[RMDB]
RNA sequence: GGGAACGACUCGAGUAGAGUCGAAAAGAUAUGGACCCACGCAUCGCGAUAAGAAGUAGUCGGAAACGACUAUACUUCUUUUGACGCGAUCGUGGGUCCUAAGUCAAACAAGACCUUCGGGUCUUGACAACCGGUUUCAGUUCGCUGAAACCGGUUGAAAAGAAACAACAACAACAAC
Reactivity to DMS in 0.01 (KOAc 150mM, MgCl2 10mM, bicine 150mM(pH8.5), 24C), signal-to-noise 1, nucleotides 027 to 126: g010a040u000a300u000g000g040a000c050c000c040a000c000g060c260a020u000c000g110c000g020a170u000a030a010g000a010a010g040u000a010g000u000c000g040g010a140a080a190c000g010a000c000u000a060u010a050c000u000u000c000u000u000u020u010g040a240c140g010c010g010a000u000c030g000u000g000g000g000u000c000c000u000a030a130g000u000c040a170a150a260c010a040a020g000a040c000c000u000u010c260g010g010g000u010c000u000u000g000a300
Structure probing data (DMS) for a 177-nucleotide construct.
Source: RMDB library TTRDES, as collected in RNAgym.
DMS adducts were read by reverse transcription with MarathonRT.